[RMDB]
RNA sequence: GGGAACGACUCGAGUAGAGUCGAAAACGCACUCGCAGCUUAAUAACCUGCGCUGAGCCCUUCUCCCCCAGCUUGCCUGUGUCCUAGGGAAUUGGAAGGUCAUCUUUCACAGGAUCGUGUGGAAGUCAUUACUCGUGAGUGUUCGCACUCACGAGAAGAUUACGAUCCUGUUCGCAGGAUCGUAAUCAAAAGAAACAACAACAACAAC
Reactivity to DMS in 0.01 (KOAc 150mM, MgCl2 10mM, bicine 150mM(pH8.5), 24C), signal-to-noise 3, nucleotides 027 to 156: c030g000c040a090c050u000c030g030c050a030g000c040u000u000a120a140u000a140a120c190c000u000g000c020g040c110u000g010a100g030c000c000c050u000u000c050u000c010c010c010c020c030a080g000c040u000u020g030c020c030u000g010u000g010u010c080c030u010a120g000g050g020a100a090u010u010g020g010a110a050g020g000u000c050a090u000c030u000u010u000c000a070c020a110g010g020a110u000c080g020u000g040u000g000g030a040a110g010u000c040a130u010u010a190c010u010c000g040u010g000a030g050u010g000u000u010c300g050c010a030c010u000c000a000c000g010a010g000a020a050
Reactivity to 2A3 in 0.01 (KOAc 150mM, MgCl2 10mM, bicine 150mM(pH8.5), 24C), signal-to-noise 4, nucleotides 027 to 156: c030g010c010a060c030u030c010g000c010a000g000c010u040u020a030a000u040a050a070c000c000u010g010c010g020c190u100g040a050g040c020c010c000u100u030c100u080c020c010c010c000c010a010g000c030u030u090g050c010c010u050g020u000g010u100c030c020u050a060g030g020g030a060a100u070u100g040g030a050a020g030g020u040c020a050u020c060u010u030u030c020a010c000a030g140g020a210u110c090g110u040g000u030g050g010a000a010g020u000c010a080u060u160a070c000u000c000g000u000g000a000g010u000g020u040u040c060g000c030a010c010u010c000a000c000g000a000g010a000a000
An RNA of 207 nucleotides, treated with DMS and 2A3 and read out base by base.
DMS adducts were read by reverse transcription with MarathonRT.
For DMS, 6,684 sequencing reads were counted.
For 2A3 the reverse transcriptase was SuperScript II with manganese.